[RMDB]
RNA sequence: GGGAACGACUCGAGUAGAGUCGAAAAUAACUCGUUGACCUGCUACUUUGCUUCUGACGUUUGUCAGGAACAGUUCAUUUCACGCUUAGUCUGGCUGGGGUCAAAACAGGUUCUUGGGCUGGAUGGCCCGGAGAACUAUAUUCGUAUAGUUCUCCGGAAAAGAAACAACAACAACAAC
Reactivity to 2A3 in 0.01 (KOAc 150mM, MgCl2 10mM, bicine 150mM(pH8.5), 24C), signal-to-noise 7, nucleotides 027 to 126: u050a020a020c010u010c050g060u020u070g040a050c000c000u010g040c010u060a050c040u120u130u110g020c010u030u030c010u020g030a050c040g190u170u170u300g010u050c000a010g000g010a010a020c020a040g010u100u120c030a060u070u100u150c070a030c040g030c020u070u090a020g020u050c040u030g050g000c010u030g050g000g000g000u020c000a020a040a010a010c040a010g060g000u070u020c020u070u070g060g010g000c010u030g060g090a080u090g060g000c020
Reactivity to DMS in 0.01 (KOAc 150mM, MgCl2 10mM, bicine 150mM(pH8.5), 24C), signal-to-noise 9, nucleotides 027 to 126: u010a080a110c050u000c060g010u000u000g010a040c020c020u000g020c090u010a060c080u000u000u010g010c040u000u000c000u000g000a020c000g020u010u010u020g010u000c010a000g000g010a010a040c060a050g010u000u000c120a100u000u000u000c080a070c130g010c090u000u000a070g010u000c100u000g010g010c020u000g010g000g000g000u000c040a030a030a070a080c130a060g010g010u000u000c060u000u000g010g010g010c020u000g010g000a110u010g010g010c060